[RMDB]
RNA sequence: GGGAACGACUCGAGUAGAGUCGAAAAUGGAUGGCGCUGCUGGGAAUGUGGUGAAUGUGCACCUCCUCUCCUAACCUGCCCCAGGCAUCCUUCAGAAGCGGGGCAGCCCAAGACCGAGAUGGGGGAACGCUAAGGCAAUGUUCGCAUUGCCUUAGCGAAAAGAAACAACAACAACAAC
Reactivity to DMS in 0.01 (KOAc 150mM, MgCl2 10mM, bicine 150mM(pH8.5), 24C), signal-to-noise 2, nucleotides 027 to 126: u000g000g000a040u000g010g010c050g010c060u000g000c080u000g000g010g010a060a060u010g020u000g000g030u000g040a130a060u000g060u000g030c070a110c020c010u000c030c010u000c030u010c000c040u000a080a080c300c000u000g000c000c000c020c020a160g020g060c060a060u000c040c130u000u000c270a140g000a060a100g020c080g000g030g030g000c010a020g000c050c040c050a120a180g010a080c170c160g030a060g000a060u000g020g010g010g000g000a030a120
Reactivity to 2A3 in 0.01 (KOAc 150mM, MgCl2 10mM, bicine 150mM(pH8.5), 24C), signal-to-noise 1, nucleotides 027 to 126: u090g020g060a000u030g040g070c000g010c080u100g000c020u030g000g050g010a110a090u110g060u060g040g030u010g110a170a130u150g010u120g110c020a070c020c010u010c000c000u020c020u010c010c010u020a040a120c000c010u000g000c000c060c000c000a010g050g010c010a020u020c040c000u110u000c080a070g020a090a010g040c010g000g010g040g050c010a000g000c000c010c000a010a000g040a000c020c090g020a020g000a090u190g000g000g000g020g000a000a050